[RMDB]
RNA sequence: GGGAACGACUCGAGUAGAGUCGAAAACACAUUCUAUUCGUAGAAUGUGGAACGUAGAGACAUCGACAGCGUCGCAGCUAUGUCGAACGAGGAAGAGCGCGCAGGGAUCGGGCUUCGGCCCGAUCAAUGCCAUCUGCUUCUUCGGAAGCAGAUGGCAAAAAGAAACAACAACAACAAC
Reactivity to DMS in 0.01 (KOAc 150mM, MgCl2 10mM, bicine 150mM(pH8.5), 24C), signal-to-noise 1, nucleotides 027 to 126: c000a000c000a010u000u000c000u000a020u020u000c120g060u000a000g000a000a000u000g010u000g000g000a040a050c080g000u000a070g000a140g000a090c090a080u000c070g010a020c030a080g010c060g020u010c300g000c150a090g010c020u000a030u000g030u000c000g000a030a090c120g000a090g000g010a030a060g000a120g010c060g030c090g030c050a070g000g020g000a020u000c010g010g000g010c000u000u030c240g000g000c010c000c000g000a000u000c000a030a030

Conditions: 150 mM KOAc, 10 mM MgCl2 and 150 mM bicine (pH 8.5), 24 C. The record gives the reactivity of an RNA of 177 nucleotides to DMS. It was measured as part of the RMDB library M2PK50.